Source information:
The record gives the reactivity of an RNA of 177 nucleotides to DMS. The RNA was probed in 150 mM KOAc, 10 mM MgCl2 and 150 mM bicine (pH 8.5) at 24 C. Source: RMDB library M2PK90, as collected in RNAgym. The DMS profile rests on 963 reads.
[RMDB]
RNA sequence: GGGAACGACUCGAGUAGAGUCGAAAAAAUUUCUAGGAAACUAGCAGGUGGCCAACGGCCCGGGCCACCGUUACUCCACUCCACUCCUAAGGGACUGGUUUGGAGGAACAUAACAGGGCAAAUGAAACUCAACAUUACGUUUCGACGUAAUGUUGAGAAAAGAAACAACAACAACAAC
Reactivity to DMS in 0.01 (KOAc 150mM, MgCl2 10mM, bicine 150mM(pH8.5), 24C), signal-to-noise 1, nucleotides 027 to 126: a090a080u020u010u000c010u000a050g000g010a210a070a170c010u000a000g010c300a160g010g000u000g000g020c000c040a050a080c130g000g030c000c000c000g010g010g000c000c000a010c000c020g010u000u000a040c020u000c000c010a020c000u000c000c010a000c120u020c000c000u000a120a100g020g000g000a020c050u000g010g000u010u000u000g010g000a010g000g010a010a010c020a040u000a070a090c210a050g030g030g040c010a030a130a130u010g010a130a080a070